[RMDB]
RNA sequence: GGGAACGACUCGAGUAGAGUCGAAAAGUGCAGUGGUGCAAUCUCAGCUUACUGCAGCUUCCGCCUCCCGGAUUCGAGCAGUUCUCUGCCUCAGCCUCCAGAGUAGCUGGGAUUACAGGCACCCGCAGCUGUACCCACGAUUCGUCGUGGGUACAGCAAAAGAAACAACAACAACAAC
Reactivity to 2A3 in 0.01 (KOAc 150mM, MgCl2 10mM, bicine 150mM(pH8.5), 24C), signal-to-noise 2, nucleotides 027 to 126: g140u070g000c140a070g020u120g220g000u040g000c040a030a020u010c030u010c010a020g000c000u100u080a050c000u010g040c040a010g000c010u020u020c010c010g040c010c030u100c030c070c000g040g020a080u030u060c040g040a060g100c000a010g020u050u020c050u010c000u000g030c030c000u130c040a010g000c000c010u050c030c040a000g010a060g130u120a020g000c020u000g000g000g000a010u040u060a120c110a090g180g010c030a000c000c030c020g020c000a000

Conditions: 150 mM KOAc, 10 mM MgCl2 and 150 mM bicine (pH 8.5), 24 C. Structure probing data (2A3) for a 177-nucleotide construct. It was measured as part of the RMDB library OK1LIB.